[RMDB]
RNA sequence: GGGAACGACUCGAGUAGAGUCGAAAAGUCAUGCCUUUUGGCAUGACAGGUAGCUUUUGCUACCGAAGAGUCUACCGCCCAUCCUAACGGUAGACUCGAGACAUAUAUAUAUUAAUGCCGACCUUAAUAUAUAUAUGGAACGGUCGGACGGAUGGGACAUGAUAUUAUACUUCGGUAUAAUAUCAUGAAAAGAAACAACAACAACAAC
Reactivity to DMS in 0.01 (KOAc 150mM, MgCl2 10mM, bicine 150mM(pH8.5), 24C), signal-to-noise 3, nucleotides 027 to 156: g010u000c000a000u000g020c000c000u000u000u000u010g060g030c000a010u000g010a010c010a020g020g020u000a010g010c010u000u010u010u010g030c000u000a010c000c000g010a050a070g000a030g040u000c020u000a020c020c000g030c010c010c020a150u000c020c020u010a160a090c020g010g020u000a020g010a010c000u000c000g000a110g000a200c010a020u000a010u000a020u000a020u000a020u000u000a020a050u000g010c040c180g000a150c110c060u000u010a020a020u000a010u000a010u000a020u000a020u010g010g010a090a140c190g010g010u000c030g000g010a090c090g010g010a050u000g000g020g020a300
Reactivity to 2A3 in 0.01 (KOAc 150mM, MgCl2 10mM, bicine 150mM(pH8.5), 24C), signal-to-noise 9, nucleotides 027 to 156: g000u000c000a000u000g000c000c000u180u300u270u300g000g000c000a000u000g000a010c000a000g000g000u000a000g000c040u140u160u220u300g000c000u000a000c000c000g010a120a020g000a000g010u000c000u000a010c000c010g010c010c000c000a000u010c000c010u070a160a060c040g010g010u010a010g000a010c000u000c010g020a060g060a000c010a000u030a000u010a000u000a000u000a010u070u110a110a040u090g070c020c030g040a060c000c020u030u120a110a000u010a000u000a000u000a000u000a010u030g030g060a070a040c040g010g040u040c010g010g030a020c010g000g000a010u010g000g000g010a000
Chemical mapping of a 207-nucleotide RNA with DMS and 2A3. The 2A3 profile rests on 8,617 reads. DMS adducts were read by reverse transcription with MarathonRT. It was measured as part of the RMDB library OK3TST. For 2A3 the reverse transcriptase was SuperScript II with manganese. The RNA was probed in 150 mM KOAc, 10 mM MgCl2 and 150 mM bicine (pH 8.5) at 24 C.